[RMDB]
RNA sequence: GGGAACGACUCGAGUAGAGUCGAAAAGAUAUGGACACUGCAUCCCAACUUGGACCUCGGAAACGAGCUAGUUGGAUGAACUACAGUGUCCUAAGUCAAAAUCGUCAACUGUUCGCAGUUGACGAAACGAGGAUAAGACGUUCGCGUCUUAUCCUCGAAAAGAAACAACAACAACAAC
Reactivity to 2A3 in 0.01 (KOAc 150mM, MgCl2 10mM, bicine 150mM(pH8.5), 24C), signal-to-noise 2, nucleotides 027 to 126: g010a040u050a030u160g010g000a000c010a010c010u020g010c000a040u130c080c060c010a000a000c000u000u100g080g160a250c000c060u000c030g010g030a070a100a040c000g020a000g000c000u030a000g000u020u000g010g010a020u030g030a050a040c100u230a020c170a020g000u000g010u030c000c000u010a030a000g060u010c000a060a000a020a250u060c010g000u000c000a010a010c010u020g040u120u100c300g090c220a020g000u000u000g010a010c010g010a000a000a000